This 207-nucleotide RNA was probed chemically with 2A3 and DMS. The reactions ran in a buffer of 150 mM KOAc, 10 mM MgCl2 and 150 mM bicine (pH 8.5), at 24 C. For 2A3 the reverse transcriptase was SuperScript II with manganese. For DMS, 4,887 sequencing reads were counted. Values cover nucleotides 27 to 156.
RNA sequence: GGGAACGACUCGAGUAGAGUCGAAAAGGACAGGAGACAUGUCUGCAUUGUUCAACACUGGAUACUUGAUAUAAUGCCUGGAAAAUAGUAGAUGUGCAGUAUAAAUUUCCGUUGAAUGAGUAAAAAUGUUAAGUGGCGAAUAAAGGAAUGCAUGGGACCUCCACUAUUAGUUCGCUAAUAGUGGAGGAAAAGAAACAACAACAACAAC
Reactivity to 2A3 in 0.01 (KOAc 150mM, MgCl2 10mM, bicine 150mM(pH8.5), 24C), signal-to-noise 4, nucleotides 027 to 156: g030g020a020c050a010g010g020a040g020a030c050a030u080g030u020c010u030g010c030a070u020u080g020u070u060c040a050a020c060a040c080u060g020g010a020u020a100c010u040u090g040a020u030a010u040a260a090u080g020c010c010u000g040g060a050a050a050a090u120a050g060u020a010g010a130u070g030u040g030c000a000g040u050a020u060a090a070a020u060u060u020c050c010g010u010u060g020a070a050u070g000a020g020u120a000a050a070a030a040u080g010u060u080a080a040g000u010g030g000c040g010a030a040u070a060a080a000g050g000a040a020u040g000c040a030u000g010g000g030a020
Reactivity to DMS in 0.01 (KOAc 150mM, MgCl2 10mM, bicine 150mM(pH8.5), 24C), signal-to-noise 3, nucleotides 027 to 156: g000g030a100c010a070g040g000a210g040a070c030a100u020g010u000c020u000g020c030a140u000u010g030u010u000c020a030a090c030a170c040u010g040g000a170u000a060c050u010u020g000a180u000a040u000a060a120u010g000c020c060u030g010g000a050a060a100a100u000a100g030u000a090g010a090u000g030u010g000c020a080g010u000a090u000a030a080a160u000u000u000c030c030g000u000u000g010a060a030u000g020a070g010u010a020a050a080a050a070u000g010u010u010a060a050g010u010g000g010c050g020a040a100u000a080a070a060g010g020a090a060u010g030c010a080u010g030g010g010a100